RNA sequence: GGGAACGACUCGAGUAGAGUCGAAAAAGGAAAUAGGUGUCGUUGGUUGAGUGAGAAAGCAUUAAAUUAUUGAUAAAGUAGGCAACAAUGUCAGCAGAAUUACAAUUGCCGGCGGAGAUUUAGGCGCCAAUGUAGACGAUUUCGAUCGUCUACAUUGAAAAGAAACAACAACAACAAC
Reactivity to DMS in 0.01 (KOAc 150mM, MgCl2 10mM, bicine 150mM(pH8.5), 24C), signal-to-noise 8, nucleotides 027 to 126: a070g010g000a040a060a070u030a050g010g010u010g010u010c030g010u000u000g010g020u000u020g010a100g000u020g000a080g010a080a070a090g010c050a080u020u010a060a060a070u030u020a100u010u010g000a090u020a060a060a100g010u010a060g010g000c030a040a050c130a060a090u020g000u000c040a060g010c050a040g010a070a070u000u010a050c130a050a080u010u010g000c030c030g000g000c010g000g000a100g000a100u010u010u010a070g000g010c050g010c090
Reactivity to 2A3 in 0.01 (KOAc 150mM, MgCl2 10mM, bicine 150mM(pH8.5), 24C), signal-to-noise 6, nucleotides 027 to 126: a000g110g020a030a070a010u140a100g000g040u020g000u050c030g010u010u030g060g030u040u080g060a060g040u070g030a060g060a070a070a010g030c010a000u050u130a010a080a060u170u150a160u060u110g060a080u080a090a080a040g050u070a040g040g040c010a020a030c050a100a060u090g030u070c030a000g000c020a010g090a060a040u100u040a050c050a090a140u070u040g000c000c010g000g000c010g020g020a050g010a050u040u030u110a040g020g000c010g000c010

The data come from the RNA Mapping Database (RMDB), libraries RFM100 and RFMREP.
Structure probing data (DMS and 2A3) for a 177-nucleotide construct.
The RNA was probed in 150 mM KOAc, 10 mM MgCl2 and 150 mM bicine (pH 8.5) at 24 C.
Values cover nucleotides 27 to 126.